Conditions: 150 mM KOAc, 10 mM MgCl2 and 150 mM bicine (pH 8.5), 24 C. This 207-nucleotide RNA was probed chemically with 2A3. Values cover nucleotides 27 to 156. For 2A3, 367 sequencing reads were counted.
RNA sequence: GGGAACGACUCGAGUAGAGUCGAAAAAGAAACCAUAGGAGGCUCUGUCUUCUUGCCUGAAUUUCAGUUGGAAGCUUGGAGAUUUGGGGUUCAACAGAGAUAAGGAAGUGUAAGCCUUCAUCCCGUCUGGUGGUUGGCGAUCACACACCGCUCUGUGUCUCGUUUCCAAUUUCGAUUGGAAACGAGAAAAAGAAACAACAACAACAAC
Reactivity to 2A3 in 0.01 (KOAc 150mM, MgCl2 10mM, bicine 150mM(pH8.5), 24C), signal-to-noise 1, nucleotides 027 to 156: a000g030a040a050a030c020c000a020u140a080g060g040a040g070g000c010u050c160u300g020u000c020u080u000c000u120u070g030c000c010u090g030a110a100u150u180u000c090a050g010u030u090g070g010a080a030g070c090u040u030g000g010a020g010a040u060u040u080g030g000g000g000u070u070c020a040a020c000a000g010a010g020a030u210a120a040g000g000a090a000g000u010g000u030a010a020g060c010c000u000u000c020a040u040c000c050c000g300u200c180u160g070g000u040g000g110u020u010g030g000c040g020a150u300c020a020c040a010c050a010c030c050g000c000u000c030u000g020u030g000